[RMDB]
RNA sequence: GGGAACGACUCGAGUAGAGUCGAAAAUGUGAUAGAGGUUGGCGCAGGCAUCGUCCGCCUCCAACUGACCCGAGUUAAUGUAGGCGUACCCCAGGGCCCGGAGAACGCGAAUACAGAACAGAUGCGCCAAACGAGAUACAUUCGUGUAUCUCGUUUGAAAAGAAACAACAACAACAAC
Reactivity to 2A3 in 0.01 (KOAc 150mM, MgCl2 10mM, bicine 150mM(pH8.5), 24C), signal-to-noise 9, nucleotides 027 to 126: u170g030u040g070a140u140a170g040a020g020g060u050u070g020g020c050g000c100a090g080g080c050a110u110c040g030u010c010c010g010c010c000u000c010c000a050a040c030u050g070a090c000c010c010g020a040g030u070u150a130a120u140g050u080a030g030g030c030g020u040a110c000c000c000c020a020g020g020g010c010c010c020g080g000a070g010a040a010c010g000c010g040a010a010u060a030c010a020g050a060a010c010a030g050a090u110g020c010g010c010
Reactivity to DMS in 0.01 (KOAc 150mM, MgCl2 10mM, bicine 150mM(pH8.5), 24C), signal-to-noise 9, nucleotides 027 to 126: u020g000u010g000a130u030a090g010a040g010g020u000u000g000g010c110g010c150a100g010g020c080a060u030c040g020u000c020c040g000c020c000u010c020c090a090a040c030u000g010a130c020c010c020g010a100g020u020u010a080a100u030g010u020a030g000g000c050g000u010a100c040c020c020c030a110g000g000g000c020c000c040g000g010a110g010a050a060c030g000c020g000a050a040u010a040c060a040g000a050a050c070a090g000a130u010g010c020g000c070
About this RNA
The record gives the reactivity of an RNA of 177 nucleotides to 2A3 and DMS. Reactivities are given for positions 27 through 126. The data come from the RNA Mapping Database (RMDB), library OK1LIB. The reactions ran in a buffer of 150 mM KOAc, 10 mM MgCl2 and 150 mM bicine (pH 8.5), at 24 C.